Record summary
The data come from the RNA Mapping Database (RMDB), library PDB130. An RNA of 207 nucleotides, treated with 2A3 and read out base by base.

[RMDB]
RNA sequence: GGGAACGACUCGAGUAGAGUCGAAAAAGCUAAUACAUGCUAAAAACCCCGACUUCGGAAGGGGUGUAUUUAUUAGAUUAAAAACCAAUGCCCUUCGGGGCUAACUGGUGAUUCAUAAUAACUUCUCGAAUCGCAUGGCCUUGCGCUGGCGAUGGUUCAACUCUAAAGUCUUCGGACUUUAGAGUUGAAAAGAAACAACAACAACAAC
Reactivity to 2A3 in 0.01 (KOAc 150mM, MgCl2 10mM, bicine 150mM(pH8.5), 24C), signal-to-noise 1, nucleotides 027 to 156: a020g030c010u000a000a000u010a060c040a040u020g000c010u090a110a150a060a210a260c010c000c000c020g010a100c030u160u090c300g040g010a010a010g000g000g000g000u000g000u000a040u000u030u000a000u000u010a030g110a130u060u250a010a050a050a030a050c020c000a020a050u050g000c000c010c000u030u030c120g000g020g050g000c000u000a040a040c050u000g000g000u010g030a050u030u170c010a010u010a230a010u060a050a150c070u170u040c020u000c050g050a050a020u040c000g000c040a260u060g000g040c030c040u160u260g130c140g000c050u000g010g000c030g000a000u040g000g040u040u000